About this RNA:
The record gives the reactivity of an RNA of 170 nucleotides to DMS and 2A3. For DMS the reverse transcriptase was MarathonRT. For DMS, 13,133 sequencing reads were counted. It was measured as part of the RMDB library 15KLIB.
[RMDB]
RNA sequence: GGGAACGACUCGAGUAGAGUCGAAAAGGUGAUGCUAUUAGUUUGAGUUUUAAUAACCUUUUAGGGUUUGAUUCUAGUAAACCAGUCACUAAGAAAUACACUUACUCCUUCUUGCCUAAAGAAGACGCCACUGUCCACUUCGGUGGACAGAAAAGAAACAACAACAACAAC
Reactivity to DMS in 0.01 (KOAc 150mM, MgCl2 10mM, bicine 150mM(pH8.5), 24C), signal-to-noise 5, nucleotides 027 to 129: g040g000u020g010a000u010g050c110u030a070u050u000a040g050u000u010u000g040a210g030u000u000u010u000a130a080u060a030a070c010c070u000u040u040u090a180g030g000g010u000u000u080g000a110u030u010c120u070a060g050u010a030a050a050c140c060a120g000u030c150a010c010u020a020a040g040a040a060a070u020a000c100a080c000u010u040a140c080u030c090c000u030u010c010u070u000g000c080c070u040a060a050a090g000a050a010g030a100c150g020c010c020a060
Reactivity to 2A3 in 0.01 (KOAc 150mM, MgCl2 10mM, bicine 150mM(pH8.5), 24C), signal-to-noise 6, nucleotides 027 to 129: g010g010u010g020a100u030g010c080u020a010u080u020a020g100u000u020u070g100a100g010u010u010u050u030a180a110u100a030a010c030c000u070u180u080u300a120g030g000g000u030u000u060g030a060u090u010c030u090a070g030u170a070a010a010c010c010a020g060u080c010a010c010u020a020a000g060a050a090a010u130a040c010a010c030u070u060a070c020u070c000c000u010u010c000u010u040g100c030c060u110a090a010a020g020a000a010g030a010c040g010c010c010a060